[RMDB]
An RNA of 177 nucleotides, treated with 2A3 and DMS and read out base by base.
RNA sequence: GGGAACGACUCGAGUAGAGUCGAAAAGGUAGGUUCGCCUACCAAAAUUUGUUUUAGCCUGAGCUAUGUGUUAUUGCACAUACAUAGCUACUUGUUAAAACAUACCAAAUCGGCCCUUCGGGGCCGAGUACAACUGUUAGUUCGCUAACAGUUGUACAAAAGAAACAACAACAACAAC
Reactivity to 2A3 in 0.01 (KOAc 150mM, MgCl2 10mM, bicine 150mM(pH8.5), 24C), signal-to-noise 4, nucleotides 027 to 126: g000g000u000a000g010g020u010u050c190g070c030c000u020a010c010c010a050a020a010a020u010u010u020g000u000u000u000u000a000g010c000c000u010g010a000g000c000u000a000u010g030u010g030u020u050a170u220u300g070c060a050c010a060u030a010c000a000u000a000g000c000u050a260c000u010u020g010u010u000a000a010a000a000c010a010u030a020c010c010a010a020a080u040c010g000g020c010c010c000u030u070c180g010g000g000g000c000c000g000a000
Reactivity to DMS in 0.01 (KOAc 150mM, MgCl2 10mM, bicine 150mM(pH8.5), 24C), signal-to-noise 4, nucleotides 027 to 126: g000g010u000a010g010g010u000u010c240g010c010c000u000a000c000c000a010a010a060a090u000u000u010g010u000u000u000u000a010g000c000c060u000g000a090g000c000u000a000u000g000u000g020u000u000a070u000u010g030c300a090c220a010u000a010c010a000u000a010g010c000u000a060c010u000u010g000u000u000a000a010a000a000c000a010u000a110c030c020a040a110a290u000c000g010g010c000c000c000u000u000c170g020g010g020g010c000c000g010a000